RNA sequence: GGGAACGACUCGAGUAGAGUCGAAAAAGAGUAGGCUGGGUUUUGCGAUCUUUAAGCAGAUGGCAGGUUCACCCCGUACGGUGCGGAAGUUCGCGCUUCCGUGAAACGCGAAAAUCGGACGGUGGCUAAGACCAAUAACAGUUCGCUGUUAUUGGAACGGUCUGUUAAUCUUCGGAUUAACAGACCGAAAAGAAACAACAACAACAAC
Reactivity to 2A3 in 0.01 (KOAc 150mM, MgCl2 10mM, bicine 150mM(pH8.5), 24C), signal-to-noise 1, nucleotides 027 to 156: a010g040a020g020u130a010g030g020c030u020g050g010g000u020u020u060u110g030c010g020a010u000c050u100u160u130a060a030g020c040a030g010a070u040g000g010c040a050g000g000u020u140c010a080c000c020c020c000g030u000a010c040g030g000u050g050c030g000g040a030a000g000u140u300c050g040c050g000c110u020u000c000c000g000u000g030a060a060a000c100g040c050g020a110a100a000a010u030c010g010g010a000c030g010g010u110g040g050c030u040a030a080g050a060c000c010a000a000u010a000a000c010a010g020u040u060c090g050c100u000g010u000u000a000u020u000g000g020a010a040

The record gives the reactivity of an RNA of 207 nucleotides to 2A3.
2A3 adducts were read by reverse transcription with SuperScript II with manganese.